[RMDB]
RNA sequence: GGGAACGACUCGAGUAGAGUCGAAAAGAUAUGGAUUCAUGUUAUCUUUUGACGAGUACAUUUCGGAAACGAAAUGAAUACUCGAUAAGAUACAUGAAUCCUAAGUCAAACGUCACUUCGGUGACGACAAAAAUUGACUGUUCGCAGUCAAUUUUUGAAAAGAAACAACAACAACAAC
Reactivity to DMS in 0.01 (KOAc 150mM, MgCl2 10mM, bicine 150mM(pH8.5), 24C), signal-to-noise 5, nucleotides 027 to 126: g000a040u000a300u000g000g000a020u000u000c000a020u000g000u010u010a010u000c000u000u000u010u010g030a220c110g000a000g020u000a080c000a000u000u000u000c010g010g010a130a100a260c010g010a010a000a010u000g000a130a150u000a010c000u000c000g010a070u000a010a010g000a020u000a020c010a010u000g000a000a010u000c000c000u000a010a060g000u000c020a110a120a250c020g000u000c000a010c000u000u010c220g040g010u000g000a000c010g000a150
Reactivity to 2A3 in 0.01 (KOAc 150mM, MgCl2 10mM, bicine 150mM(pH8.5), 24C), signal-to-noise 3, nucleotides 027 to 126: g030a030u090a020u140g000g020a000u020u010c000a010u010g090u180u300a020u000c020u090u150u130u210g280a180c040g010a000g000u000a010c010a010u020u000u000c010g000g000a060a080a040c010g000a010a010a000u010g000a050a050u050a020c010u000c010g000a000u010a030a000g000a000u000a010c010a000u010g000a000a000u000c000c000u000a020a020g020u000c020a090a050a110c030g000u000c010a000c000u070u080c300g210g000u010g000a000c000g020a040

An RNA of 177 nucleotides, treated with DMS and 2A3 and read out base by base.
DMS adducts were read by reverse transcription with MarathonRT.
For 2A3, 8,426 sequencing reads were counted.
Source: RMDB library TTRDES, as collected in RNAgym.
The RNA was probed in 150 mM KOAc, 10 mM MgCl2 and 150 mM bicine (pH 8.5) at 24 C.